[RMDB]
RNA sequence: GGGAACGACUCGAGUAGAGUCGAAAAGAUAUGGAAUCGUUCGUUUGCUAGCAGCCGUGUCGGAAACGACACGGCUGCUUGGACCAAACGAGACGAUUCCUAAGUCAAAGACGCCUUCGGGCGUCAACUGGAGAUAAUACUUCGGUAUUAUCUCCAGAAAAGAAACAACAACAACAAC
Reactivity to DMS in 0.01 (KOAc 150mM, MgCl2 10mM, bicine 150mM(pH8.5), 24C), signal-to-noise 2, nucleotides 027 to 126: g010a050u020a300u000g000g000a010a000u000c000g020u010u000c020g000u000u000u000g010c010u000a030g010c000a020g030c020c000g060u010g040u000c010g010g000a120a070a190c000g000a010c000a000c020g020g020c000u000g000c000u000u000g010g020a090c300c020a000a010a040c000g020a060g020a010c000g000a000u000u010c000c000u020a020a140g000u010c040a100a070a230g010a030c000g010c010c010u000u010c220g070g000g020c010g000u000c010a010a070

Structure probing data (DMS) for a 177-nucleotide construct. Values cover nucleotides 27 to 126. The RNA was probed in 150 mM KOAc, 10 mM MgCl2 and 150 mM bicine (pH 8.5) at 24 C.